[RMDB]
RNA sequence: GGGAACGACUCGAGUAGAGUCGAAAACAAAAAGUCCAGGUGCUUUCUGCCGUUGCUCACAAUCCGGAACUGGUCAUUCUGGAUGAACCGUUUUCCGGCCUGGACCCGGUUAACCAGUCGGUUCUGGUACUACUAUCCGAUUCGUCGGAUAGUAGUAAAAAGAAACAACAACAACAAC
Reactivity to 2A3 in 0.01 (KOAc 150mM, MgCl2 10mM, bicine 150mM(pH8.5), 24C), signal-to-noise 4, nucleotides 027 to 126: c010a010a120a030a010a010g010u000c010c010a010g010g030u060g060c040u050u160u150c050u090g050c020c030g090u090u120g040c020u030c030a120c030a040a080u000c010c000g010g000a010a010c000u030g010g060u040c010a030u050u030c030u050g100g040a040u040g020a050a020c020c000g010u020u000u090u020c010c000g010g000c000c020u010g010g020a010c010c000c000g020g000u050u030a030a040c020c010a030g080u110c040g060g000u060u060c020u030g000g040
Reactivity to DMS in 0.01 (KOAc 150mM, MgCl2 10mM, bicine 150mM(pH8.5), 24C), signal-to-noise 6, nucleotides 027 to 126: c050a050a080a090a110a120g010u000c010c010a020g010g030u010g020c080u000u000u000c090u020g000c040c080g010u000u000g000c060u000c100a090c170a100a050u010c010c000g000g010a020a030c070u010g010g000u000c110a300u000u000c040u000g010g010a050u000g010a050a070c080c060g000u010u000u010u000c000c010g020g010c060c020u010g000g000a040c070c060c040g010g010u000u000a060a080c030c050a060g000u010c080g010g000u000u000c010u000g010g000

An RNA of 177 nucleotides, treated with 2A3 and DMS and read out base by base. Source: RMDB library OK2TST, as collected in RNAgym. The DMS profile rests on 7,575 reads. For 2A3, 6,316 sequencing reads were counted. For 2A3 the reverse transcriptase was SuperScript II with manganese.